[RMDB]
RNA sequence: GGGAACGACUCGAGUAGAGUCGAAAACUUUACUUUAUCUUCCUCUCCAGUCCCACAAUAUUGAGCACAGCAUCUUGUUCACAGUCUGGAACGUAUCUUUUCGACAUUUAUAUCAGAUAGUAGGGAAUUAUGUAGCUGUUGGGUGAAGUGAAGGUGGCUAAGUGAUUAUGUUCGCAUAAUCACUUAGAAAAGAAACAACAACAACAAC
Reactivity to 2A3 in 0.01 (KOAc 150mM, MgCl2 10mM, bicine 150mM(pH8.5), 24C), signal-to-noise 6, nucleotides 027 to 156: c010u060u090u070a020c010u010u080u040a070u050c010u060u030c010c010u000c030u010c040c000a040g020u040c020c020c010a040c050a040a070u130a080u160u170g020a040g020c060a010c000a080g030c020a080u040c040u080u080g020u090u040c060a030c030a090g050u020c030u080g040g030a090a050c040g040u080a090u080c030u060u100u070u080c030g020a000c010a060u120u200u100a160u060a060u120c020a020g020a050u050a050g080u030a040g020g010g060a010a020u130u080a070u220g050u040a030g000c010u010g040u110u050g030g030g010u040g020a040a010g010u010g060a040a020g020g020u040g010g000
Reactivity to DMS in 0.01 (KOAc 150mM, MgCl2 10mM, bicine 150mM(pH8.5), 24C), signal-to-noise 4, nucleotides 027 to 156: c010u000u000u000a020c010u000u000u010a050u010c020u000u000c020c010u000c060u000c030c040a160g010u000c010c010c010a100c090a100a130u010a130u000u000g000a070g030c040a300c050a130g000c050a090u000c070u000u000g020u000u000c030a090c070a100g000u000c020u000g020g000a050a030c070g010u000a070u000c020u010u000u000u010c040g030a040c040a070u000u000u000a100u000a080u040c050a070g020a080u000a050g030u000a100g010g030g020a080a070u000u000a070u010g020u000a130g040c020u000g020u000u000g020g020g020u000g000a050a070g020u000g010a020a050g010g020u000g000g010